The record gives the reactivity of an RNA of 177 nucleotides to 2A3 and DMS. The data come from the RNA Mapping Database (RMDB), library OK1LIB. The DMS profile rests on 12,997 reads. The RNA was probed in 150 mM KOAc, 10 mM MgCl2 and 150 mM bicine (pH 8.5) at 24 C. For 2A3 the reverse transcriptase was SuperScript II with manganese.
[RMDB]
RNA sequence: GGGAACGACUCGAGUAGAGUCGAAAAGUCUUUCAUGACAUUGCCAUAUUUGAAGAGUCCAGGUCAGUUCUGUAGAAUGGCGUUCAAUUUGGACUUGUCUCUUUCUUCAGGAUUAGCUUCAGGUGAGGUUUAACUGUAGGUUCGCCUACAGUUAAACAAAAGAAACAACAACAACAAC
Reactivity to 2A3 in 0.01 (KOAc 150mM, MgCl2 10mM, bicine 150mM(pH8.5), 24C), signal-to-noise 9, nucleotides 027 to 126: g020u010c020u070u300u130c170a160u300g020a020c010a050u030u120g070c010c010a080u100a170u130u150u150g090a090a050g030a020g100u030c050c020a020g010g070u060c030a020g040u070u000c020u030g050u060a030g020a090a030u050g030g010c000g010u020u030c060a190a270u140u070u240g000g000a000c000u040u090g030u020c030u000c000u060u060u000c010u030u010c010a010g020g000a070u040u080a030g030c010u040u040c060a040g040g050u060g070a060g110
Reactivity to DMS in 0.01 (KOAc 150mM, MgCl2 10mM, bicine 150mM(pH8.5), 24C), signal-to-noise 5, nucleotides 027 to 126: g000u000c010u000u060u060c130a090u050g020a030c040a090u020u020g010c000c020a100u020a060u020u020u020g000a040a060g000a090g020u030c030c040a050g000g010u020c060a040g010u010u000c010u000g000u000a050g000a030a040u010g010g010c030g000u000u010c040a060a130u020u030u020g010g010a030c040u010u020g000u020c020u010c100u010u000u000c020u010u000c020a030g010g000a040u010u010a110g000c030u000u010c050a060g010g010u010g020a110g010